RNA sequence: GGGAACGACUCGAGUAGAGUCGAAAACAAGGACAGCGGCCUGCUGGACUACACGGAGGUCCAGCGCCGCAACCAGCUGCACGACCUGCGCUUUGCCGACAUCGACACGGUCAUCCGCGCCGACGCCACUGAGCGGUGUAUUCGUACACCGCUCAGUAAAAGAAACAACAACAACAAC
Reactivity to 2A3 in 0.01 (KOAc 150mM, MgCl2 10mM, bicine 150mM(pH8.5), 24C), signal-to-noise 1, nucleotides 027 to 126: c020a040a070g090g050a080c030a100g020c000g000g010c040c100u220g040c010u000g000g010a010c020u120a040c180a030c100g300g070a090g000g030u000c000c000a000g000c010g000c000c000g000c010a000a000c000c000a010g030c020u150g020c010a010c140g060a080c020c030u010g000c030g000c000u030u040u110g060c030c020g030a080c030a110u130c010g020a040c060a010c080g060g000u030c020a080u010c030c010g080c010g050c010c040g020a020c060g030c030c030
Reactivity to DMS in 0.01 (KOAc 150mM, MgCl2 10mM, bicine 150mM(pH8.5), 24C), signal-to-noise 1, nucleotides 027 to 126: c110a110a050g000g010a170c110a140g010c020g030g000c110c280u010g050c000u000g000g020a010c010u020a120c110a080c190g030g000a150g030g010u000c020c000a010g020c020g020c010c000g000c020a000a090c000c000a090g020c040u000g000c070a060c090g000a080c080c050u000g020c040g020c010u000u000u000g050c000c010g000a090c080a020u000c070g000a050c020a070c070g020g050u010c060a100u010c050c040g020c010g020c030c020g000a060c090g000c050c050
Overview: This 177-nucleotide RNA was probed chemically with 2A3 and DMS. 2A3 is a SHAPE reagent: it acylates the 2'-hydroxyl of flexible nucleotides of all four kinds. Source: RMDB library OK2TRN, as collected in RNAgym.